Conditions: 150 mM KOAc, 10 mM MgCl2 and 150 mM bicine (pH 8.5), 24 C. Structure probing data (DMS and 2A3) for a 177-nucleotide construct. 2A3 adducts were read by reverse transcription with SuperScript II with manganese.
RNA sequence: GGGAACGACUCGAGUAGAGUCGAAAAUUAUGGUGUUAUCCGUACACUGAUAAGGAUCCAUUUGUAUUGGAUAAGUGGCCCCACGUUUACAUUGUGGCAAAUCAGCCAUAUUUUGGAACAAGAGUAGCACAUGUGAGCCUUUCGAGGCUCACAUGUGAAAAGAAACAACAACAACAAC
Reactivity to DMS in 0.01 (KOAc 150mM, MgCl2 10mM, bicine 150mM(pH8.5), 24C), signal-to-noise 1, nucleotides 027 to 126: u010u010a030u000g010g030u000g020u000u000a070u000c070c120g000u000a040c040a030c140u000g020a110u000a060a160g010g010a170u000c030c060a070u010u010u000g020u010a060u010u000g010g010a030u020a030a050g000u010g000g000c030c020c010c040a070c190g000u000u000u000a030c080a040u000u000g030u000g000g010c020a010a090a150u020c270a160g020c000c010a020u000a000u010u010u000u000g010g000a000a030c090a080a140g020a140g050u010a070g000
Reactivity to 2A3 in 0.01 (KOAc 150mM, MgCl2 10mM, bicine 150mM(pH8.5), 24C), signal-to-noise 1, nucleotides 027 to 126: u060u030a090u090g020g020u090g090u150u110a050u040c040c000g000u020a030c020a040c010u060g070a080u040a230a130g140g000a050u060c000c000a060u050u060u060g240u020a150u020u220g000g040a020u020a070a020g060u050g090g060c000c010c000c000a060c090g000u040u000u060a080c090a060u040u080g020u000g000g010c000a000a000a300u160c080a020g000c020c000a000u020a060u010u080u020u030g020g030a020a000c020a100a000g120a010g190u150a020g130